An RNA of 177 nucleotides, treated with 2A3 and DMS and read out base by base. The RNA was probed in 150 mM KOAc, 10 mM MgCl2 and 150 mM bicine (pH 8.5) at 24 C. The data come from the RNA Mapping Database (RMDB), library OK1LIB. For DMS the reverse transcriptase was MarathonRT.
RNA sequence: GGGAACGACUCGAGUAGAGUCGAAAACGGCUUGGCCGGUGUCGCCUCCGUGCGACGUAAACCGUCGUGUGACAAAUAACCAUCAGGAGGGUUAUUCGAGUCGGGUACUGCCGACUCGGGCCUUGCCUCUAGCGAUCCGCUUCGGUGGGUCGCUAGAAAAAGAAACAACAACAACAAC
Reactivity to 2A3 in 0.01 (KOAc 150mM, MgCl2 10mM, bicine 150mM(pH8.5), 24C), signal-to-noise 5, nucleotides 027 to 126: c020g010g000c020u010u020g010g000c010c010g060g020u030g010u020c040g010c000c010u010c010c020g030u060g010c000g000a000c000g000u080a080a070a030c080c010g000u010c000g000u020g020u030g010a010c010a010a000a000u050a010a020c010c010a020u130c040a010g040g040a030g030g000g000u010u010a050u030u000c000g000a000g000u000c000g000g000g000u080a080c040u060g090c010c000g000a000c000u000c000g000g000g000c000c000u000u040g020c000c000
Reactivity to DMS in 0.01 (KOAc 150mM, MgCl2 10mM, bicine 150mM(pH8.5), 24C), signal-to-noise 5, nucleotides 027 to 126: c120g000g010c020u000u000g000g010c020c020g010g000u010g000u000c030g000c030c040u020c060c100g000u030g010c010g000a000c010g010u020a070a150a150c220c000g000u000c010g020u000g000u000g000a060c070a070a000a010u010a030a030c020c020a070u030c140a090g010g010a140g000g000g010u000u010a020u000u000c000g000a020g010u000c000g000g010g010u050a100c190u020g000c000c010g000a010c010u010c000g010g000g000c010c010u000u000g000c020c000